[RMDB]
RNA sequence: GGGAACGACUCGAGUAGAGUCGAAAAAUCUACACGUACAAGGGAUGGAAGAUUGUCGGUGAUGAUCUCGUAUGGACCGGUGGUAAGAUUCAUGUAAAGUCGGACAAGAUUGCACGCGCAAUUGCAGAGGCGGCAAUUCGUACACCUGCCGUCGCCGUGUACCAGAGUAGUUCGCUACUCUGGUACAAAAAGAAACAACAACAACAAC
Reactivity to DMS in 0.01 (KOAc 150mM, MgCl2 10mM, bicine 150mM(pH8.5), 24C), signal-to-noise 2, nucleotides 027 to 156: a060u000c020u000a050c040a070c040g030u000a050c070a070a090g020g030g000a050u000g030g000a110a060g020a050u000u000g010u000c020g010g030u010g000a090u000g010a030u000c050u000c040g020u000a150u010g020g000a030c050c010g000g030u000g020g000u020a070a130g000a070u000u020c050a060u000g030u000a080a080a090g000u000c060g000g000a110c060a100a120g010a140u000u010g030c020a110c110g020c070g000c020a080a050u000u000g020c040a060g000a080g020g000c020g010g010c010a010a230u010u000c130g000u000a060c050a050c040c000u010g010c000c000g000u000c020g020c020c050g000
Reactivity to 2A3 in 0.01 (KOAc 150mM, MgCl2 10mM, bicine 150mM(pH8.5), 24C), signal-to-noise 3, nucleotides 027 to 156: a000u020c060u080a040c060a000c090g090u120a030c020a070a070g030g010g020a080u060g030g020a030a040g040a090u050u060g090u120c090g030g030u080g010a070u040g030a050u070c070u010c050g060u080a050u090g010g040a020c000c020g020g000u010g000g010u020a050a010g070a080u070u120c040a010u130g060u200a000a000a130g020u050c020g020g000a010c010a060a020g000a000u010u010g020c030a050c100g110c000g020c060a030a100u070u040g010c030a030g040a070g120g020c000g010g000c000a010a060u050u020c010g010u010a040c030a030c050c040u030g000c000c000g000u000c040g000c010c080g040
The data come from the RNA Mapping Database (RMDB), library OK3TST. The record gives the reactivity of an RNA of 207 nucleotides to DMS and 2A3. For 2A3, 1,519 sequencing reads were counted. The DMS profile rests on 2,945 reads. For DMS the reverse transcriptase was MarathonRT. The RNA was probed in 150 mM KOAc, 10 mM MgCl2 and 150 mM bicine (pH 8.5) at 24 C.